[RMDB]
About this RNA: An RNA of 177 nucleotides, treated with DMS and read out base by base.
RNA sequence: GGGAACGACUCGAGUAGAGUCGAAAAAAAAAGAUAUGGAACUUAGGGAGCGUGUGUGGAACCUCGUUAGUUCGGAAACGAACUACGAGAAACGCACACGCGAAGAACUAAGUUCCUAAGUCAAAAAUCUAGUGAUAGAGUUCGCUCUAUCACUAGAAAAAGAAACAACAACAACAAC
Reactivity to DMS in 0.01 (KOAc 150mM, MgCl2 10mM, bicine 150mM(pH8.5), 24C), signal-to-noise 1, nucleotides 027 to 126: a060a110a030a130a070g000a000u000a300u030g000g020a020a000c000u000u000a000g020g000g000a090g030c000g000u000g000u000g010u010g000g000a250a220c040c010u000c000g000u030u000a010g020u000u000c000g000g000a110a060a240c000g030a020a020c000u000a000c000g000a000g000a010a010a070c020g000c010a020c020a020c010g070c030g000a030a060g000a110a160c000u010a000a020g000u010u000c020c000u000a010a040g000u030c010a030a130a100a110a080
The reactions ran in a buffer of 150 mM KOAc, 10 mM MgCl2 and 150 mM bicine (pH 8.5), at 24 C. In probing experiments dimethyl sulfate is read out at A N1 and C N3, which are open when not base-paired.